[RMDB]
RNA sequence: GGGAACGACUCGAGUAGAGUCGAAAACAUAUUAUCCGGUGGUAUCAGGCAGGCGCCGUGGAUGGUUUCGUGAUCAUGCCGCCCUCGGUUCCGGACUCAGCGCAGGAUUUCUUCGAUGAGGUCGUUCGCGAGUGGGACUGUUCGCAGUCCCACUCGCAAAAGAAACAACAACAACAAC
Reactivity to 2A3 in 0.01 (KOAc 150mM, MgCl2 10mM, bicine 150mM(pH8.5), 24C), signal-to-noise 1, nucleotides 027 to 126: c060a110u270a280u300u030a070u070c010c000g010g000u140g000g080u050a030u190c000a010g000g000c140a110g040g000c070g000c000c050g000u000g000g030a020u080g000g000u010u060u130c130g040u050g020a060u030c050a060u170g010c000c000g010c000c000c000u000c000g000g000u130u000c010c000g080g020a030c020u000c000a060g010c000g000c030a060g020g030a010u020u210u100c030u070u070c040g100a100u170g030a050g040g000u010c000g000u000u000c020
This 177-nucleotide RNA was probed chemically with 2A3.
The RNA was probed in 150 mM KOAc, 10 mM MgCl2 and 150 mM bicine (pH 8.5) at 24 C.